RNA sequence: GGGAACGACUCGAGUAGAGUCGAAAAUAGUGAGCUUGGAUAUUUUGAAGAUGGAGAACCAGCUACUUGCUUCACUGGUAAGGAUGGUGAUCUAUACACGGUGUUGAAAGAGUUGAAUUCAAGACUCAUCAUAUCGAUGCUUCGGCAUCGAUAUGAUAAAAGAAACAACAACAACAAC
Reactivity to 2A3 in 0.01 (KOAc 150mM, MgCl2 10mM, bicine 150mM(pH8.5), 24C), signal-to-noise 3, nucleotides 027 to 126: u110a000g080u060g040a010g030c000u030u040g000g010a040u040a120u120u190u110u200g140a180a100g080a070u080g090g000a080g010a060a040c020c000a000g040c040u110a300c020u040u010g040c000u090u090c030a020c080u070g000g000u050a070a070g030g020a010u030g080g220u110g050a030u030c000u030a040u010a060c180a020c130g040g030u050g020u030u030g020a020a070a010g060a020g000u080u050g070a070a030u060u000c010a020a040g060a280c000u020c020
Reactivity to DMS in 0.01 (KOAc 150mM, MgCl2 10mM, bicine 150mM(pH8.5), 24C), signal-to-noise 3, nucleotides 027 to 126: u020a110g020u000g010a040g010c000u000u010g010g000a030u000a070u000u000u000u020g010a140a130g010a090u000g010g020a090g000a190a120c150c010a000g010c070u000a090c020u000u000g000c020u000u000c170a080c120u000g000g000u030a040a300g000g000a040u010g020g000u000g010a170u010c000u000a060u000a050c080a090c060g010g000u010g000u000u000g010a060a060a070g000a090g010u010u000g010a110a100u000u000c040a020a050g000a090c040u000c030
Chemical mapping of a 177-nucleotide RNA with 2A3 and DMS. Reactivities are given for positions 27 through 126. The data come from the RNA Mapping Database (RMDB), library OK2TST. 2A3 adducts were read by reverse transcription with SuperScript II with manganese. The 2A3 profile rests on 2,197 reads. The reactions ran in a buffer of 150 mM KOAc, 10 mM MgCl2 and 150 mM bicine (pH 8.5), at 24 C. DMS adducts were read by reverse transcription with MarathonRT.